[RMDB]
RNA sequence: GGGAACGACUCGAGUAGAGUCGAAAAUUCAACAACAGUUUGUCAUACCUAUAAAUAUUGGUGGUUAUGCAAACGCAACAAACAUACAAGUUCAGACCGGCUACAAAUGUGCUGUUGCAUUGCGUGACCCUGAGUAAGGGUUCGCCCUUACUCAGGGAAAAGAAACAACAACAACAAC
Reactivity to DMS in 0.01 (KOAc 150mM, MgCl2 10mM, bicine 150mM(pH8.5), 24C), signal-to-noise 3, nucleotides 027 to 126: u010u010c020a090a060c080a090a060c140a160g000u000u000u000g010u000c080a050u000a130c040c010u020a150u010a080a080a120u000a110u000u010g000g000u000g010g010u000u020a020u010g010c020a000a030a070c150g000c020a010a010c040a020a030a030c020a030u000a100c230a070a090g020u000u000c060a110g000a130c190c130g010g000c060u000a070c170a060a090a070u000g010u000g010c160u000g000u000u000g020c020a070u000u000g020c020g020u000g010a130
Reactivity to 2A3 in 0.01 (KOAc 150mM, MgCl2 10mM, bicine 150mM(pH8.5), 24C), signal-to-noise 3, nucleotides 027 to 126: u070u010c030a030a010c000a040a020c020a080g020u070u040u040g040u120c020a050u050a140c010c010u100a060u130a260a200a080u300a170u170u150g140g010u080g020g030u070u060a000u040g000c000a000a020a040c060g000c000a000a040c000a000a020a000c010a000u100a020c060a090a040g010u060u240c000a020g080a110c070c030g050g000c010u070a040c070a070a210a040u050g020u040g050c160u010g000u020u020g030c040a030u000u050g010c010g040u010g010a030